Conditions: 150 mM KOAc, 10 mM MgCl2 and 150 mM bicine (pH 8.5), 24 C. The record gives the reactivity of an RNA of 177 nucleotides to DMS and 2A3. It was measured as part of the RMDB library OK1LIB. High 2A3 reactivity points to a flexible backbone, as in loops and unpaired stretches.
RNA sequence: GGGAACGACUCGAGUAGAGUCGAAAACUGCCCUGGGUUUUCGCUGUCUUACAGAAAGAUUGUGCCUAAUUUGUUCGUCUCUUAAUCGGAUGGAAGUUGUGAUAUUUGUAAGGGCGGAUGGUUAACGCGAUAAGAUAUGAUUCGUCAUAUUUUAUCGAAAAGAAACAACAACAACAAC
Reactivity to DMS in 0.01 (KOAc 150mM, MgCl2 10mM, bicine 150mM(pH8.5), 24C), signal-to-noise 9, nucleotides 027 to 126: c090u010g000c020c010c010u000g010g010g010u000u000u000u010c020g010c030u010g000u020c050u000u010a070c070a080g010a100a080a070g010a070u010u020g010u010g000c040c020u010a060a070u010u010u010g010u000u000c070g010u000c010u010c040u000u010a070a090u030c100g000g010a050u010g000g010a070a090g010u010u000g010u010g010a110u030a070u000u020u010g010u020a060a060g000g000g010c030g010g000a050u000g000g000u010u010a050a110c180g000
Reactivity to 2A3 in 0.01 (KOAc 150mM, MgCl2 10mM, bicine 150mM(pH8.5), 24C), signal-to-noise 9, nucleotides 027 to 126: c050u080g020c010c000c000u040g050g000g000u010u030u020u030c020g020c020u020g040u050c020u030u100a080c040a040g170a050a110a010g050a040u040u090g040u040g000c000c000u050a070a080u060u020u030g030u010u030c010g020u000c020u000c000u120u100a120a090u080c020g060g010a060u040g040g060a070a060g030u100u110g040u060g090a080u040a110u160u110u100g120u060a030a020g010g010g000c020g000g000a020u030g020g030u070u090a080a010c060g000
For 2A3, 12,872 sequencing reads were counted.
Reactivities are given for positions 27 through 126.